[RMDB]
RNA sequence: GGGAACGACUCGAGUAGAGUCGAAAAGACCCAGAGCUAGAGGGUGAUGCUUGGACCCCAUUCUGCAGGGCAGUUUCUCCUCGUAUAGGGUGCAUGUCUGUUUAGGGCCAUGAGAAGCACUGGUUGACAUCUGCCCUUGGUUCGCCAAGGGCAGAUGAAAAGAAACAACAACAACAAC
Reactivity to DMS in 0.01 (KOAc 150mM, MgCl2 10mM, bicine 150mM(pH8.5), 24C), signal-to-noise 1, nucleotides 027 to 126: g000a150c020c000c000a150g000a090g030c040u020a070g010a070g000g010g060u000g000a100u090g050c010u010u000g000g000a110c000c070c010c020a040u050u040c030u010g000c090a140g000g010g000c020a030g030u000u000u000c060u000c000c010u020c060g000u060a090u050a040g020g020g000u030g000c140a140u030g000u010c000u000g000u000u060u040a070g060g000g000c000c000a040u010g000a120g000a250a110g000c050a130c070u000g000g000u000u010g030a140
Reactivity to 2A3 in 0.01 (KOAc 150mM, MgCl2 10mM, bicine 150mM(pH8.5), 24C), signal-to-noise 1, nucleotides 027 to 126: g090a010c000c000c000a050g010a050g010c060u210a080g030a030g190g000g050u100g020a070u000g110c000u020u020g130g070a300c000c000c000c000a050u120u110c070u150g000c000a140g000g000g000c000a000g000u000u050u000c000u000c000c000u000c010g060u130a050u060a110g060g000g020u000g020c000a060u200g040u010c000u000g300u070u110u150a050g040g000g050c060c000a110u040g040a100g040a200a000g000c000a000c000u000g000g000u020u050g080a100